[RMDB]
This 207-nucleotide RNA was probed chemically with 2A3 and DMS. The data come from the RNA Mapping Database (RMDB), library OK3TST.

RNA sequence: GGGAACGACUCGAGUAGAGUCGAAAACAAGUAAGAGAUGCUAUAGGAGCUGAAUUGAUGCAGAGUGUUAUUAACACAUGGAAGUAUGAUUCGUCAAUGAAAUGUACGUCAGUUGAAAUUAGUUCAUUGAGAACUUAUCAAAUAUUAGCAUUAAAGAAUUUAUGGAAGUGUUCGCACUUCCAUAAAUAAAAGAAACAACAACAACAAC
Reactivity to 2A3 in 0.01 (KOAc 150mM, MgCl2 10mM, bicine 150mM(pH8.5), 24C), signal-to-noise 3, nucleotides 027 to 156: c030a020a020g110u130a150a010g040a020g000a050u030g010c010u030a010u080a140g090g030a010g020c020u000g050a070a050u080u030g030a020u050g020c030a030g030a070g080u010g010u030u110a150u160u150a090a000c020a000c000a040u080g010g070a060a050g040u070a070u110g060a090u060u080c040g040u040c060a000a000u030g030a050a040a020u110g030u050a010c050g040u000c070a000g000u020u050g060a050a070a060u040u040a040g010u020u000c000a030u080u150g030a030g010a150a010c010u050u050a060u060c030a040a050a020u090a130u110u100a020g000c000a000u030u110a050a060a010g070a110
Reactivity to DMS in 0.01 (KOAc 150mM, MgCl2 10mM, bicine 150mM(pH8.5), 24C), signal-to-noise 2, nucleotides 027 to 156: c020a080a140g010u000a130a100g010a230g000a060u000g000c020u000a120u000a110g020g020a110g010c030u000g010a070a120u000u010g020a060u030g030c040a070g030a150g040u000g010u010u010a170u010u010a070a060c030a050c030a090u000g000g030a090a080g020u000a030u000g000a100u000u000c050g020u000c050a050a120u000g000a000a020a120u010g010u000a040c060g020u020c030a000g010u010u000g010a080a060a120u000u000a030g010u010u000c010a160u010u010g030a150g000a050a060c020u000u000a100u000c030a040a060a100u000a100u010u000a080g010c010a050u000u000a050a080a200g000a130
Conditions: 150 mM KOAc, 10 mM MgCl2 and 150 mM bicine (pH 8.5), 24 C. For 2A3 the reverse transcriptase was SuperScript II with manganese. DMS adducts were read by reverse transcription with MarathonRT.